An RNA of 177 nucleotides, treated with DMS and 2A3 and read out base by base.
It was measured as part of the RMDB library RFM100.
The DMS profile rests on 1,486 reads.
The reactions ran in a buffer of 150 mM KOAc, 10 mM MgCl2 and 150 mM bicine (pH 8.5), at 24 C.
RNA sequence: GGGAACGACUCGAGUAGAGUCGAAAAAUUGCACCUAAACCCAAGAAUCACUGUUUCUUAUAGCGGUGGUUUAAACAGAGGUGCAAACAGCAAGCGGAUCUUGUCGCCUUUGGGGGGCUGUGGCCGUCGUAUCUCACACGUUCGCGUGUGAGAUACGAAAAGAAACAACAACAACAAC
Reactivity to DMS in 0.01 (KOAc 150mM, MgCl2 10mM, bicine 150mM(pH8.5), 24C), signal-to-noise 1, nucleotides 027 to 126: a130u040u000g000c000a000c000c000u000a130a080a110c000c000c010a140a140g000a030a020u000c000a000c000u000g000u000u000u000c300u000u030a090u050a020g000c000g030g060u000g000g030u030u000u000a060a130a120c290a030g000a020g010g000u020g000c000a010a050a080c300a080g000c030a130a060g000c000g000g000a030u030c030u000u000g010u000c160g000c160c000u020u000u020g020g000g000g000g000g010c050u000g000u000g010g000c050c020g020u000
Reactivity to 2A3 in 0.01 (KOAc 150mM, MgCl2 10mM, bicine 150mM(pH8.5), 24C), signal-to-noise 4, nucleotides 027 to 126: a000u070u050g000c010a010c030c010u090a100a060a060c010c000c000a000a040g020a020a000u000c000a000c010u010g060u030u050u070c220u120u280a180u200a170g000c020g010g020u010g000g040u000u000u030a040a040a020c050a000g100a010g060g000u000g000c000a000a010a000c020a000g120c050a070a000g040c000g040g040a070u030c050u090u130g060u070c060g140c030c020u040u070u070g050g000g000g000g010g000c020u010g020u120g140g020c010c010g020u040